[RMDB]
RNA sequence: GGGAACGACUCGAGUAGAGUCGAAAAGAUAUGGAGGCAGGGAGUCUGGGGGGAUGAGGACUAUUAUCUCGGAAACGAGAUAACGAAUCCUCAUCCCCCUAAAGACGAAGAACUGCCUCCUAAGUCACAAACCUUUUAUCUUCGGAUAAAAGGUUUGAAAAGAAACAACAACAACAAC
Reactivity to DMS in 0.01 (KOAc 150mM, MgCl2 10mM, bicine 150mM(pH8.5), 24C), signal-to-noise 2, nucleotides 027 to 126: g000a070u000a300u010g010g010a030g010g030c010a000g030g000g030a100g020u000c000u000g000g000g000g000g000g000a000u000g010a000g010g000a030c040u000a220u010u000a010u000c010u010c000g010g000a100a120a250c010g010a020g000a000u010a010a000c110g030a100a150u000c000c000u000c000a000u000c000c010c000c000c000u000a000a010a020g000a010c010g050a130a160g010a140a220c000u000g000c000c000u000c000c000u000a020a100g000u000c040a270